[RMDB]
RNA sequence: GGGAACGACUCGAGUAGAGUCGAAAAACGCAGCACGAGGCCCCGCAGGUGUGGAGUCUGAUGUUGAGACCAAUGAAAUUGUUGACUCUGUGCAGUAUGCUCAUAAACAUGACAUACAAAUUACUAAAAACAGGACUGUUCGCAGUCCUGAAAAGAAACAACAACAACAAC
Reactivity to DMS in 0.01 (KOAc 150mM, MgCl2 10mM, bicine 150mM(pH8.5), 24C), signal-to-noise 4, nucleotides 027 to 129: a110c060g040c040a000g030c030a080c100g030a090g000g000c150c020c020c050g090c110a130g060g020u010g070u000g030g000a130g030u000c030u030g030a030u010g000u040u000g000a120g040a190c080c000a130a150u030g020a060a100a110u100u000g030u030u040g010a090c070u030c040u040g030u000g030c090a060g000u020a010u020g040c250u000c000a030u040a100a090a130c170a210u020g040a000c040a020u040a030c010a010a000a000u060u030a040c160u020a020a050a100a100a210
Reactivity to 2A3 in 0.01 (KOAc 150mM, MgCl2 10mM, bicine 150mM(pH8.5), 24C), signal-to-noise 1, nucleotides 027 to 129: a050c010g010c010a010g000c010a020c080g060a020g090g030c010c000c010c000g000c030a100g000g020u110g140u040g090g030a020g000u000c050u020g220a170u020g100u050u070g030a040g020a040c000c020a090a110u190g130a190a030a080u110u180g010u000u030g000a000c000u000c030u020g000u000g020c010a000g010u020a000u040g000c060u000c070a000u080a020a170a000c020a000u030g010a040c020a000u170a010c080a030a150a060u100u120a090c100u100a000a040a120a000a000